RNA sequence: GGGAACGACUCGAGUAGAGUCGAAAAAAGUGAAGCAGCAAAGCCCUUAAGCCGACAGAUGGCCCUGGUGGGGUGUGUCUUCCAACUGGGUAGGUGCUUCUCAAGGCUGAAAAUUCCAGUGAGUCGGAACCGACAAUAAAUUCGUUUAUUGUCGGUUAAAAGAAACAACAACAACAAC
Reactivity to DMS in 0.01 (KOAc 150mM, MgCl2 10mM, bicine 150mM(pH8.5), 24C), signal-to-noise 9, nucleotides 027 to 126: a060a050g010u000g010a040a030g020c020a030g000c130a060a080a150g010c010c010c010u000u000a090a110g010c030c020g010a070c080a090g000a050u000g000g000c010c010c010u000g010g020u000g000g010g010g020u010g020u010g010u010c030u000u010c020c020a050a060c070u000g000g000g020u000a080g010g010u000g010c020u000u000c010u000c050a090a100g010g010c150u010g000a060a050a090a170u000u010c030c020a070g020u000g000a050g010u000c010g000g000
Reactivity to 2A3 in 0.01 (KOAc 150mM, MgCl2 10mM, bicine 150mM(pH8.5), 24C), signal-to-noise 4, nucleotides 027 to 126: a000a000g070u050g020a040a000g000c020a000g010c110a080a040a050g040c020c000c000u020u060a040a010g020c010c010g020a010c020a040g090a070u050g040g000c000c000c000u080g080g010u110g030g020g000g010u130g090u060g040u060c000u130u030c010c010a030a030c040u040g010g000g020u020a030g040g050u040g020c000u050u020c020u000c020a040a050g090g000c010u000g070a110a050a040a070u140u020c020c010a030g070u020g070a010g020u020c010g010g010
The record gives the reactivity of an RNA of 177 nucleotides to DMS and 2A3. In probing experiments dimethyl sulfate is read out at A N1 and C N3, which are open when not base-paired. The reactions ran in a buffer of 150 mM KOAc, 10 mM MgCl2 and 150 mM bicine (pH 8.5), at 24 C. For DMS the reverse transcriptase was MarathonRT.